RNA sequence: GGGAACGACUCGAGUAGAGUCGAAAAGAUAUGGACUGCAGGCUUCCGAUAAGAUGUGGUCGGAAACGACCAAACAUCUUUUGACGGAAGUCUGCAGUCCUAAGUCAAAAGUCCGCUUCGGCGGACACAUUACACUGUGCUUCGGCACAGUGUAAUGAAAAGAAACAACAACAACAAC
Reactivity to DMS in 0.01 (KOAc 150mM, MgCl2 10mM, bicine 150mM(pH8.5), 24C), signal-to-noise 4, nucleotides 027 to 126: g010a060u000a300u000g000g000a010c010u000g000c000a000g010g000c020u000u010c000c010g020a150u000a030a020g000a020u000g030u000g010g010u010c000g010g000a080a050a210c010g010a010c000c010a060a110a120c010a010u000c000u000u000u000u000g010a230c130g000g010a010a010g010u000c010u000g000c000a000g000u000c000c000u000a000a070g020u010c040a100a130a190a150g010u000c010c000g010c000u000u010c210g040g010c000g000g010a000c000a010